RNA sequence: GGGAACGACUCGAGUAGAGUCGAAAAACAGCAAAAAGGAGUUUAAAUUAGAUUUGCAAACGGACGGUACUAAAUACCGUCACUUUUACGUCUAACUUAUCGUUAACUCUGCAAAAAGAAAACAAGAAAAACAAGCGUGAGUUCGCUCACGCUUGAAGCCAAAAAUCAUCUUCGGAUGAUUUUUGGCAAAAGAAACAACAACAACAAC
Reactivity to 2A3 in 0.01 (KOAc 150mM, MgCl2 10mM, bicine 150mM(pH8.5), 24C), signal-to-noise 1, nucleotides 027 to 156: a030c040a000g100c030a030a030a050a000a050g120g020a020g010u070u070u120a080a030a060u030u050a020g020a020u040u030u300g040c090a060a010a010c000g000g020a000c000g000g040u050a040c050u180a080a160a140u070a000c030c000g010u000c000a030c000u000u000u010u030a000c000g010u000c000u000a030a030c020u020u080a050u150c050g040u010u030a000a010c020u000c000u000g030c100a000a100a000a000a000g080a050a060a020a020c030a010a040g120a200a130a040a000a000c000a000a000g000c010g000u000g000a000g030u010u100c180g090c050u000c000a000c000g000c000u010u000g000a000a000